[RMDB]
RNA sequence: GGGAACGACUCGAGUAGAGUCGAAAACAACUGGAUCCUCCUCACACUCUCACUCCUCAAUCUAACAGUACUCCUAUCAACACCAGUCGGAAUCACCUUUGUAGUAAUCUACGGCUUAUACAAAGCAUACACACUGUUCACAUCAUCAGGACAAGGCUGAUAAUAAAGUGUUCGCACUUUAUUAUCAAAAAGAAACAACAACAACAAC
Reactivity to 2A3 in 0.01 (KOAc 150mM, MgCl2 10mM, bicine 150mM(pH8.5), 24C), signal-to-noise 9, nucleotides 027 to 156: c020a020a030c040u040g040g010a040u030c000c010u010c010c010u030c020a050c020a010c030u030c000u020c020a040c020u030c010c010u050c040a060a110u050c040u100a080a060c020a050g020u030a030c010u000c020c010u050a060u110c040a040a090c020a050c070c010a030g050u070c040g070g050a040a050u060c020a040c030c000u030u030u110g030u020a050g020u020a020a060u020c030u040a040c050g070g000c010u050u060a060u020a120c050a030a030a020g010c010a030u080a070c050a010c010a010c060u040g030u090u070c040a030c010a110u120c020a030u050c040a040g040g030a030c020a040a030g180g010c070
Reactivity to DMS in 0.01 (KOAc 150mM, MgCl2 10mM, bicine 150mM(pH8.5), 24C), signal-to-noise 4, nucleotides 027 to 156: c040a070a100c020u000g000g020a090u000c020c000u000c010c000u000c060a080c130a110c060u000c030u000c040a100c030u000c020c020u000c070a080a050u000c050u010a050a090c060a110g010u000a070c030u000c000c020u000a110u010c050a060a080c050a050c030c020a060g010u000c050g020g010a110a070u010c040a050c020c010u010u000u000g020u000a040g010u000a040a060u000c040u000a130c060g040g010c050u000u000a100u000a040c050a070a030a060g000c000a070u000a090c080a060c060a080c050u000g020u000u010c040a050c030a060u000c070a060u000c030a070g000g000a080c050a080a060g010g030c090

The data come from the RNA Mapping Database (RMDB), library OK3TST. Chemical mapping of a 207-nucleotide RNA with 2A3 and DMS. Reactivities are rounded to 0.1 and cut off at 0 and 3. The 2A3 profile rests on 15,607 reads. For 2A3 the reverse transcriptase was SuperScript II with manganese. The DMS profile rests on 12,664 reads.